This 177-nucleotide RNA was probed chemically with DMS and 2A3.

[RMDB]
RNA sequence: GGGAACGACUCGAGUAGAGUCGAAAAAGACAUUCCAAGCAAAAGAUGUGUCUGCUCUUUAAAGGAGGACAUGGACAGAUACCGUGCCACAAAUGCAUCUAUCUGAACGGUGUCUCCUUGCUUGCGAUCUGUAAACAUAGUUCGCUAUGUUUACAGAAAAAGAAACAACAACAACAAC
Reactivity to DMS in 0.01 (KOAc 150mM, MgCl2 10mM, bicine 150mM(pH8.5), 24C), signal-to-noise 9, nucleotides 027 to 126: a020g010a040c040a060u010u000c100c010a040a080g010c040a060a050a110a070g000a050u010g020u000g010u000c030u000g000c090u000c010u010u010u000a090a060a050g000g000a030g020g010a020c010a020u000g010g010a250c020a010g000a010u000a010c240c300g010u000g010c010c170a260c300a050a100a110u010g000c010a010u000c130u000a010u000c010u000g000a040a130c030g010g020u000g000u000c000u000c010c010u000u000g000c120u000u000g010c130g000a100
Reactivity to 2A3 in 0.01 (KOAc 150mM, MgCl2 10mM, bicine 150mM(pH8.5), 24C), signal-to-noise 9, nucleotides 027 to 126: a000g050a010c030a070u090u020c020c010a020a020g010c010a020a040a040a030g040a070u130g040u020g050u080c050u080g050c020u020c000u040u180u160a220a190a010g020g010a020g020g040a010c010a020u070g040g010a010c010a030g010a000u010a010c030c060g010u010g030c030c030a220c060a120a130a050u230g010c010a020u010c020u060a020u000c020u030g030a100a020c020g080g010u020g020u010c000u010c000c000u020u030g010c020u010u030g030c040g050a080